[RMDB]
RNA sequence: GGGAACGACUCGAGUAGAGUCGAAAAACAGCGCAACAUGUGCUCGACAACGCUGGGGUCACAUUCCCACAGCUCUGGUCAACCACAGACAUGGCCAUCGGUGCGAUUUGGGAGAGCGAAGAUGGAGAGGCGAGGCGUAUCCCUGAUGCCGUUGCCUCAAGACCUAGUUGUUCGCAACUAGGUCUUGAAAAGAAACAACAACAACAAC
Reactivity to 2A3 in 0.01 (KOAc 150mM, MgCl2 10mM, bicine 150mM(pH8.5), 24C), signal-to-noise 7, nucleotides 027 to 156: a000c040a030g000c030g020c070a060a150c070a300u180g000u030g010c010u020c020g010a010c010a090a060c050g000c010u030g030g000g000g000u030c050a040c020a150u040u020c000c010c000a020c010a010g010c020u020c020u080g050g020u050c040a080a070c050c040a060c050a100g060a030c050a140u130g060g010c030c010a040u060c020g060g000u110g040c050g080a140u030u080u160g030g020g000a050g000a000g020c050g030a050a020g030a050u090g020g020a030g020a030g040g010c020g020a010g010g000c020g000u050a150u110c010c000c030u040g040a040u110g020c010c040g030u020u040g020c000c020u000
Reactivity to DMS in 0.01 (KOAc 150mM, MgCl2 10mM, bicine 150mM(pH8.5), 24C), signal-to-noise 3, nucleotides 027 to 156: a030c080a060g010c060g030c050a110a100c140a150u000g000u000g020c080u000c040g000a090c010a060a100c110g000c010u010g030g000g030g000u000c030a080c080a240u000u000c010c000c000a090c130a170g020c030u000c030u020g010g010u010c040a090a100c020c050a090c020a100g000a060c090a220u000g000g040c020c020a070u010c040g020g040u010g010c070g000a120u000u010u000g010g000g050a080g000a130g000c020g010a110a080g000a080u010g010g010a060g000a030g020g030c020g000a060g040g000c030g040u000a110u000c010c010c010u000g020a110u000g000c010c000g030u000u000g000c000c000u000

Conditions: 150 mM KOAc, 10 mM MgCl2 and 150 mM bicine (pH 8.5), 24 C.
Chemical mapping of a 207-nucleotide RNA with 2A3 and DMS.
It was measured as part of the RMDB library OK3TST.
For DMS the reverse transcriptase was MarathonRT.